[RMDB]
RNA sequence: GGGAACGACUCGAGUAGAGUCGAAAAGAUAUGGACUGACUAGGGAGCUCGUAUUCGGAAACGAAUACGGAGCGACGAUCUAGCAGUCCUAAGUCAAAAGACAGCGUAUGUUCGCAUACGCUGUCAAUCACAACUACAACUUCGGUUGUAGUUGUGAAAAAGAAACAACAACAACAAC
Reactivity to DMS in 0.01 (KOAc 150mM, MgCl2 10mM, bicine 150mM(pH8.5), 24C), signal-to-noise 1, nucleotides 027 to 126: g010a020u000a010u000g000g000a040c000u000g000a250c000u000a000g010g000g000a020g030c000u020c000g010u000a000u010u000c000g030g000a000a000a010c000g000a010a000u010a000c000g010g020a020g020c000g020a030c300g000a020u000c010u000a020g000c010a010g000u010c000c000u000a000a050g010u010c010a130a090a120a180g000a020c010a000g010c000g020u000a000u010g020u010u020c290g010c010a000u000a010c000g010c000u000g000u000c010a010a090